[RMDB]
RNA sequence: GGGAACGACUCGAGUAGAGUCGAAAAGAAAAUACAAGGCUGACAAAAUCCUUUCCCAACCUCCACGUGGUGUCGGCUGGAUAAUGCAUUAGAAAUGUAGCAUUUAUCAACUGGGAAGGCAAAAAAAGAGUGUAUCUUACUUCGGUAAGAUACACUCAAAAGAAACAACAACAACAAC
Reactivity to 2A3 in 0.01 (KOAc 150mM, MgCl2 10mM, bicine 150mM(pH8.5), 24C), signal-to-noise 3, nucleotides 027 to 126: g010a000a020a010a020u120a040c040a070a140g010g000c000u000g040a000c020a000a050a030a160u120c010c000u080u220u000c010c010c000a030a010c000c000u000c060c040a140c150g080u170g000g010u000g000u000c000g000g000c000u010g020g010a010u010a000a010u020g000c030a060u060u170a140g160a190a130a060u190g060u120a050g000c000a010u050u020u100a030u040c000a010a000c010u000g000g000g020a010a000g010g000c040a090a110a010a040a000a010a000
Reactivity to DMS in 0.01 (KOAc 150mM, MgCl2 10mM, bicine 150mM(pH8.5), 24C), signal-to-noise 2, nucleotides 027 to 126: g000a070a130a060a120u030a100c100a040a090g000g020c010u000g020a030c010a010a030a100a300u010c040c000u000u000u000c010c020c000a050a060c020c000u000c000c060a100c080g000u010g020g000u000g000u000c000g020g000c000u000g000g030a020u000a020a020u010g000c030a230u010u000a090g030a060a120a120u000g000u010a150g010c020a000u010u010u000a020u010c010a000a080c190u020g000g000g000a000a040g000g000c300a020a000a020a020a060a060a110
The record gives the reactivity of an RNA of 177 nucleotides to 2A3 and DMS. The DMS profile rests on 989 reads. Values cover nucleotides 27 to 126.